[RMDB]
RNA sequence: GGGAACGACUCGAGUAGAGUCGAAAAGAGAGGACAGCGACAGACAGUUAAAAGCCUCUUCAUGUAAGGAUGUUAUUUCAUAAGGACACCAGCACUGGAUUAUCCCCUUCACUUUAAACUUCUGCCAGCUUGUACAAAGAGAUAAAACAAAAUAGCACCUGCUAUUUACGUUCGCGUAAAUAGCAGGAAAAGAAACAACAACAACAAC
Reactivity to 2A3 in 0.01 (KOAc 150mM, MgCl2 10mM, bicine 150mM(pH8.5), 24C), signal-to-noise 3, nucleotides 027 to 156: g010a000g010a010g010g030a040c030a000g030c030g080a050c050a060g040a030c050a050g030u060u070a050a170a010a000g000c030c020u020c020u040u080c040a030u070g080u130a040a030g030g010a020u030g030u090u080a100u100u170u080c050a080u080a130a050g030g010a000c000a000c070c030a020g000c030a010c050u000g000g010a080u050u120a060u190c070c000c000c060u060u100c020a080c030u080u080u160a070a040a040c010u050u030c030u040g050c000c000a030g030c070u040u030g040u010a030c040a020a150a010g040a010g020a010u130a120a050a020a020c060a010a030a020a050u260a020g020c030a030
Reactivity to DMS in 0.01 (KOAc 150mM, MgCl2 10mM, bicine 150mM(pH8.5), 24C), signal-to-noise 1, nucleotides 027 to 156: g030a110g000a070g050g000a150c110a100g010c010g020a090c050a160g010a160c080a090g020u010u010a110a070a150a150g000c000c030u000c000u010u010c120a090u000g000u000a060a090g020g030a050u000g010u010u010a100u000u000u000c030a180u010a190a160g000g000a160c070a080c040c000a110g010c040a110c020u030g030g000a110u000u000a060u000c000c000c020c030u000u010c060a070c050u000u000u000a090a060a040c000u000u010c020u010g000c000c020a060g020c030u000u000g020u030a030c050a050a030a070g010a090g010a150u010a030a020a040a140c080a030a030a050a070u020a030g050c060a170
The data come from the RNA Mapping Database (RMDB), library OK3TST.
Structure probing data (2A3 and DMS) for a 207-nucleotide construct.
For 2A3, 1,242 sequencing reads were counted.
Reactivities are rounded to 0.1 and cut off at 0 and 3.